[RMDB]
RNA sequence: GGGAACGACUCGAGUAGAGUCGAAAAGGGUUAGCGUUCGCGCUAACCCCAGGAUCGAACAUGUCAAAUCUCGCAGACAUGAAUCGAUCAAAAGCGAGAAAACUAGACAGUCAUUCGUGACUGUCAAAGCACUUCCUAAGUUCGCUUAGGAAGUGCUAAAAGAAACAACAACAACAAC
Reactivity to DMS in 0.01 (KOAc 150mM, MgCl2 10mM, bicine 150mM(pH8.5), 24C), signal-to-noise 1, nucleotides 027 to 126: g000g000g080u000u000a010g000c010g010u000u000c210g000c020g060c010u010a020a000c010c000c010c090a060g010g000a030u010c030g010a010a230c000a010u000g000u000c030a030a110a150u000c080u000c160g000c090a180g010a000c010a000u000g000a170a120u010c000g010a000u000c090a040a020a100a160g040c060g000a060g000a060a100a030a080c150u000a160g010a010c000a010g000u000c000a010u000u010c110g030u000g010a000c000u000g030u010c000a010a040
Reactivity to 2A3 in 0.01 (KOAc 150mM, MgCl2 10mM, bicine 150mM(pH8.5), 24C), signal-to-noise 1, nucleotides 027 to 126: g010g010g000u000u000a000g020c020g040u030u020c260g030c020g040c100u010a000a000c000c000c010c000a050g060g100a030u020c000g010a020a020c010a000u020g000u010c040a050a050a230u140c130u090c140g020c080a060g000a040c000a000u020g000a040a130u010c010g000a010u030c030a030a080a000a010g010c000g020a060g090a050a060a020a000c120u100a040g000a000c000a000g000u000c000a020u040u080c130g070u040g000a010c000u000g000u000c000a030a000

Description:
The record gives the reactivity of an RNA of 177 nucleotides to DMS and 2A3. Reactivities are given for positions 27 through 126. Conditions: 150 mM KOAc, 10 mM MgCl2 and 150 mM bicine (pH 8.5), 24 C. In probing experiments dimethyl sulfate is read out at A N1 and C N3, which are open when not base-paired.